[RMDB]
The data come from the RNA Mapping Database (RMDB), library M2PK50. This 177-nucleotide RNA was probed chemically with DMS and 2A3. The RNA was probed in 150 mM KOAc, 10 mM MgCl2 and 150 mM bicine (pH 8.5) at 24 C.
RNA sequence: GGGAACGACUCGAGUAGAGUCGAAAAACAUUAAGUUUCGACUUAAUGUAAACCCGAUGAAGCGGCACAAACGGAGCUUCAUACAUCUAAGAGUGCAAAUAAAAAGUUGAUCCUUCGGGAUCAACAACGGGUAUAGAAUCUUCGGAUUCUAUACCCGAAAAGAAACAACAACAACAAC
Reactivity to DMS in 0.01 (KOAc 150mM, MgCl2 10mM, bicine 150mM(pH8.5), 24C), signal-to-noise 1, nucleotides 027 to 126: a010c030a000u010u010a000a010g000u000u000u020c130g020a020c000u000u000a010a000u000g010u010a030a080a080c000c000c000g010a000u000g000a030a010g010c010g020g130c020a070c080a050a110a120c170g030g000a160g000c010u000u010c000a030u000a170c190a070u000c200u000a050a060g000a090g040u000g010c050a110a120a080u050a060a080a070a090a190g010u000u000g000a000u000c000c010u010u000c270g000g030g000a020u000c000a000a000c000a080a100
Reactivity to 2A3 in 0.01 (KOAc 150mM, MgCl2 10mM, bicine 150mM(pH8.5), 24C), signal-to-noise 2, nucleotides 027 to 126: a000c020a000u020u000a000a020g010u010u060u150c210g080a020c000u000u030a000a000u000g020u010a030a030a070c020c000c000g000a000u020g020a000a020g020c070g090g010c110a000c020a090a190a030c270g130g080a040g000c020u000u000c010a020u050a050c060a050u060c080u180a150a030g090a040g100u050g040c030a010a090a070u190a050a150a030a010a010g010u000u010g000a000u000c010c010u020u030c230g120g000g000a000u010c000a000a000c000a000a010

Background: 2A3 adducts were read by reverse transcription with SuperScript II with manganese. High DMS reactivity at an A or C suggests that its Watson-Crick edge is free. As a SHAPE reagent, 2A3 marks flexible, mostly unpaired nucleotides at the ribose 2'-OH.